The data come from the RNA Mapping Database (RMDB), library M2RFPK. An RNA of 207 nucleotides, treated with 2A3 and read out base by base.
[RMDB]
RNA sequence: GGGAACGACUCGAGUAGAGUCGAAAAACGGUCGUACGCGACCGAGGCGCGGCUAGGUCGACGGACCGAACAAUGGCAUCCCGCAUUCUGCCAUCCGCCGCGCAGCUUCUUCUCAAACGUUGCGGAAAAAAGUAGGACACCUUCGGGUGUCCUACAAGACGUAUACAGCCUUCGGGCUGUAUACGUCAAAAGAAACAACAACAACAAC
Reactivity to 2A3 in 0.01 (KOAc 150mM, MgCl2 10mM, bicine 150mM(pH8.5), 24C), signal-to-noise 1, nucleotides 027 to 156: a000c030g000g010u000c000g000u060a040c290g000c000g170a000c020c000g000a030g020g000c000g000c010g000g000c000u010a000g000g000u010c010g070a170c180g180g020a000c000c020g000a020a000c000a000a000u000g000g000c010a050u140c050c000c000g010c000a010u190u070c030u090g000c000c000a010u000c030c020g000c000c000g040c030g000c010a000g020c010u160u130c020u090u050c020u010c030a070a070a130c100g010u060u000g020c030g000g000a060a040a000a000a000a110g010u000a000g000g000a000c000a000c000c000u000u020c140g060g000g000u000g000u030c000c000u000a000c000a000a020

Source information
The RNA was probed in 150 mM KOAc, 10 mM MgCl2 and 150 mM bicine (pH 8.5) at 24 C. 2A3 adducts were read by reverse transcription with SuperScript II with manganese.